The data come from the RNA Mapping Database (RMDB), library OK2TST. This 177-nucleotide RNA was probed chemically with 2A3 and DMS. For 2A3 the reverse transcriptase was SuperScript II with manganese. For DMS, 791 sequencing reads were counted. Values cover nucleotides 27 to 126. Conditions: 150 mM KOAc, 10 mM MgCl2 and 150 mM bicine (pH 8.5), 24 C. For DMS the reverse transcriptase was MarathonRT. The 2A3 profile rests on 1,387 reads.
RNA sequence: GGGAACGACUCGAGUAGAGUCGAAAAUCUUCCAACCGAUGGGUCAGGAAACUACAUCUAUCCUGCAGUUGGAUCAGAUGAAAAGAUUCUUCCAACGGACAAUCUUGGAAAGGUGGUUUAUCCUAUCCCUUCUCUGGAACUUCGGUUCCAGAGAAGGAAAAGAAACAACAACAACAAC
Reactivity to 2A3 in 0.01 (KOAc 150mM, MgCl2 10mM, bicine 150mM(pH8.5), 24C), signal-to-noise 2, nucleotides 027 to 126: u010c010u070u000c010c020a090a080c020c000g010a010u010g020g000g030u120c080a020g060g040a030a040a030c000u050a030c030a020u000c010u030a030u010c000c000u050g170c120a210g100u200u100g050g010a010u050c070a010g010a010u010g020a000a040a020a060g070a040u000u020c000u060u000c010c010a060a050c020g000g020a030c070a070a150u090c050u070u060g010g000a090a060a030g020g010u050g000g040u010u140u140a080u040c010c010u020a110u060c000
Reactivity to DMS in 0.01 (KOAc 150mM, MgCl2 10mM, bicine 150mM(pH8.5), 24C), signal-to-noise 1, nucleotides 027 to 126: u000c080u000u010c010c010a030a060c010c070g000a090u020g010g010g010u020c220a040g010g010a010a030a070c000u000a150c020a030u000c000u000a090u000c030c020u010g050c230a160g010u000u000g000g000a010u010c160a030g000a000u000g000a060a030a030a000g000a220u000u010c010u000u020c010c020a050a100c010g000g050a120c090a120a080u000c170u000u000g000g010a020a070a030g020g000u000g000g000u000u000u000a050u010c010c010u000a120u000c050